[RMDB]
An RNA of 177 nucleotides, treated with 2A3 and DMS and read out base by base.
RNA sequence: GGGAACGACUCGAGUAGAGUCGAAAAACAACACGCUUCGGCGUGUUGUCGACGGAGGAAGCUGAGGACGCGGUUGUGCCGCAGCAGGGAAGCGCAGCGUAAAUCAGAGGUGAUUCGUCACCUCUAAUGAACAGUAGAGAUUCGUCUCUACUGUUCAAAAAGAAACAACAACAACAAC
Reactivity to 2A3 in 0.01 (KOAc 150mM, MgCl2 10mM, bicine 150mM(pH8.5), 24C), signal-to-noise 7, nucleotides 027 to 126: a000c000a000a010c000a000c000g010c000u030u070c230g150g000c000g000u000g010u000u000g000u010c010g020a030c050g030g030a040g010g030a080a030g020c040u040g040a040g050g040a040c050g020c030g080g040u120u100g100u180g050c010c010g000c010a010g000c020a020g020g010g030a070a020g020c040g000c060a020g010c030g070u130a060a050a070u140c060a020g000a000g030g000u010g010a020u000u060c170g040u000c050a000c000c010u000c000u010a020a040
Reactivity to DMS in 0.01 (KOAc 150mM, MgCl2 10mM, bicine 150mM(pH8.5), 24C), signal-to-noise 9, nucleotides 027 to 126: a020c000a000a010c000a000c000g020c000u000u010c190g040g020c000g030u000g010u000u000g010u000c050g000a100c090g010g010a070g000g000a090a090g020c050u000g010a090g010g010a080c100g010c040g000g010u000u010g010u010g010c020c020g010c050a070g010c070a080g000g000g010a080a070g000c090g010c040a050g000c070g010u000a050a080a100u010c140a020g010a020g010g020u000g000a030u000u010c190g010u000c000a010c000c000u000c000u000a020a060

Background: Reactivities are rounded to 0.1 and cut off at 0 and 3. DMS (dimethyl sulfate) methylates the pairing face of unpaired adenines and cytosines. The RNA was probed in 150 mM KOAc, 10 mM MgCl2 and 150 mM bicine (pH 8.5) at 24 C. 2A3 adducts were read by reverse transcription with SuperScript II with manganese.